Structure probing data (DMS and 2A3) for a 177-nucleotide construct.
Reactivities are given for positions 27 through 126.
For DMS the reverse transcriptase was MarathonRT.
For 2A3 the reverse transcriptase was SuperScript II with manganese.
Source: RMDB libraries RFM100 and RFMREP, as collected in RNAgym.
RNA sequence: GGGAACGACUCGAGUAGAGUCGAAAAGGCACAGAGGGACACACCGGGCCGGGGCGCCGAGGAUAGCUACCGCCCGCAGGGAUAGUAAAUAUCCGUGACCAGUGGCCUCGGUGGCUGCGUCUCCCGGAAUCAUAGCUAUGUUCGCAUAGCUAUGAUUAAAAGAAACAACAACAACAAC
Reactivity to DMS in 0.01 (KOAc 150mM, MgCl2 10mM, bicine 150mM(pH8.5), 24C), signal-to-noise 9, nucleotides 027 to 126: g010g010c010a040c030a040g000a110g010g010g010a130c140a110c030a050c100c010g000g000g000c120c030g010g000g000g020c020g020c090c160g010a100g000g010a070u010a060g000c050u000a060c090c050g000c020c010c050g010c090a060g000g000g010a030u010a020g000u020a060a090a140u000a010u000c000c000g000u010g000a120c100c090a080g010u010g010g000c010c000u010c020g000g020u000g010g010c010u000g000c080g010u000c060u000c000c000c010g000g000
Reactivity to 2A3 in 0.01 (KOAc 150mM, MgCl2 10mM, bicine 150mM(pH8.5), 24C), signal-to-noise 7, nucleotides 027 to 126: g030g000c020a010c020a030g070a070g020g090g070a050c030a000c000a010c100c010g010g010g000c040c020g010g010g000g000c050g000c040c060g030a080g040g050a090u080a110g030c020u080a120c020c030g040c010c010c010g030c020a040g040g000g050a010u010a010g090u120a020a170a150u040a010u000c010c020g070u020g030a100c030c020a040g050u060g110g010c000c000u010c010g010g010u030g030g010c010u040g010c020g030u010c030u010c040c000c000g020g090